[RMDB]
RNA sequence: GGGAACGACUCGAGUAGAGUCGAAAAGAGGAUCACGUGUCGUAUGGCCCCUGGCCUGCCGCUUUGACAACAUGCACGUGCUCAACUUACGUAAACAAACACAGGAAAAGCGGGCGGAGAUGCAAUGUCAUUCUACAAUUUUCGAAUUGUAGAAUGAAAAAGAAACAACAACAACAAC
Reactivity to 2A3 in 0.01 (KOAc 150mM, MgCl2 10mM, bicine 150mM(pH8.5), 24C), signal-to-noise 9, nucleotides 027 to 126: g090a010g050g030a030u060c020a000c040g020u030g030u070c070g060u140a120u180g040g010c010c010c010c050u080g050g020c010c010u030g030c020c010g020c060u080u060u100g100a080c070a120a020c030a120u190g000c010a000c010g010u020g000c010u010c020a090a140c030u100u140a040c070g130u160a090a090a020c060a040a090a010c070a010c030a110g120g000a060a060a010a010g020c010g000g030g000c020g020g020a080g000a030u090g040c060a050a070u130g050
Reactivity to DMS in 0.01 (KOAc 150mM, MgCl2 10mM, bicine 150mM(pH8.5), 24C), signal-to-noise 8, nucleotides 027 to 126: g020a080g000g010a040u010c020a030c030g020u000g000u010c130g000u010a070u030g000g010c020c010c070c100u040g010g020c010c010u000g010c040c060g010c090u010u010u000g010a140c110a080a090c150a070u040g020c020a020c010g010u000g000c100u000c040a050a070c080u010u000a090c140g000u020a050a070a070c150a070a080a100c170a090c120a080g000g010a090a030a050a060g010c040g010g000g020c050g010g010a070g010a080u020g000c060a060a050u040g000

Conditions: 150 mM KOAc, 10 mM MgCl2 and 150 mM bicine (pH 8.5), 24 C. An RNA of 177 nucleotides, treated with 2A3 and DMS and read out base by base. The data come from the RNA Mapping Database (RMDB), library OK1LIB. For DMS the reverse transcriptase was MarathonRT. The 2A3 profile rests on 28,368 reads.